[RMDB]
RNA sequence: GGGAACGACUCGAGUAGAGUCGAAAACGCUUCAGAUGAGACCCAGCGCCGCGGCGUAGGCGGCAGCCAGCGUCUUGUUCGGCGCGUCGAACUUCUUCUGGAUGUUCUUGUGGUGGAAGUUCACCGAAAAUGGUACGCAGUUCGCUGCGUACCAUUUAAAAGAAACAACAACAACAAC
Reactivity to 2A3 in 0.01 (KOAc 150mM, MgCl2 10mM, bicine 150mM(pH8.5), 24C), signal-to-noise 1, nucleotides 027 to 126: c010g000c040u080u080c040a130g020a180u120g030a020g020a060c050c000c010a030g000c010g020c000c000g000c030g010g030c000g000u020a120g020g020c040g050g020c020a010g030c000c000a000g020c010g000u000c010u170u230g090u190u140c000g010g000c000g000c000g020u070c050g020a030a040c010u060u040c010u040u050c030u050g050g000a060u070g040u130u000c050u090u160g180u100g040g000u020g010g040a120a150g080u100u070c020a010c060c010g000a070
Reactivity to DMS in 0.01 (KOAc 150mM, MgCl2 10mM, bicine 150mM(pH8.5), 24C), signal-to-noise 2, nucleotides 027 to 126: c120g040c080u000u000c020a050g000a020u000g010a060g000a050c080c050c060a240g000c000g020c000c010g010c070g000g000c050g030u010a100g010g040c000g010g030c300a030g040c000c010a300g010c040g010u000c000u000u020g030u010u000c020g020g010c040g000c020g010u000c100g010a060a080c070u000u000c010u000u000c020u000g000g010a060u010g000u000u010c070u000u000g010u010g030g010u000g000g030a130a100g000u010u000c020a060c040c030g020a050
Source: RMDB library OK2TST, as collected in RNAgym. An RNA of 177 nucleotides, treated with 2A3 and DMS and read out base by base. For 2A3, 1,315 sequencing reads were counted. The RNA was probed in 150 mM KOAc, 10 mM MgCl2 and 150 mM bicine (pH 8.5) at 24 C.